The record gives the reactivity of an RNA of 177 nucleotides to DMS and 2A3. Reactivities are given for positions 27 through 126. The DMS profile rests on 6,702 reads. It was measured as part of the RMDB library OK1LIB. The RNA was probed in 150 mM KOAc, 10 mM MgCl2 and 150 mM bicine (pH 8.5) at 24 C.

RNA sequence: GGGAACGACUCGAGUAGAGUCGAAAACUCGAAAGAGACCUGCAUAUCUUAGGCAGAUGAACAAGUCACGUCUGAAAAGCGAAAGCCCUAAGAUAUGCAGCUGUGAAGACUUGACGCUGAAAAUAAACCUAAUCCAUAGGUUCGCCUAUGGAUUAGGAAAAGAAACAACAACAACAAC
Reactivity to DMS in 0.01 (KOAc 150mM, MgCl2 10mM, bicine 150mM(pH8.5), 24C), signal-to-noise 4, nucleotides 027 to 126: c010u010c020g000a080a150a080g000a020g010a210c160c000u010g000c000a000u000a000u000c000u000u000a000g000g030c020a040g010a040u010g010a100a110c020a040a020g010u000c010a300c020g000u000c010u000g010a110a060a130a140g020c010g000a120a100a130g000c000c000c000u000a000a020g000a010u000a000u000g020c030a010g010c080u040g000u000g000a070a060g000a010c010u000u000g010a170c050g010c070u000g000a050a050a070a100u030a070a140a080
Reactivity to 2A3 in 0.01 (KOAc 150mM, MgCl2 10mM, bicine 150mM(pH8.5), 24C), signal-to-noise 6, nucleotides 027 to 126: c000u010c010g020a020a040a010g050a010g080a130c010c000u000g000c000a000u000a000u020c010u000u000a000g010g020c000a000g000a030u010g010a050a040c010a030a010g020u020c000a010c070g010u000c000u020g080a200a210a130a000g020c010g060a070a020a010g010c000c000c000u000a000a000g000a000u000a000u000g000c000a000g000c010u070g030u020g080a100a030g010a010c010u020u020g000a020c020g020c090u130g050a070a070a030a070u220a070a090a030
Reactivities are rounded to 0.1 and cut off at 0 and 3.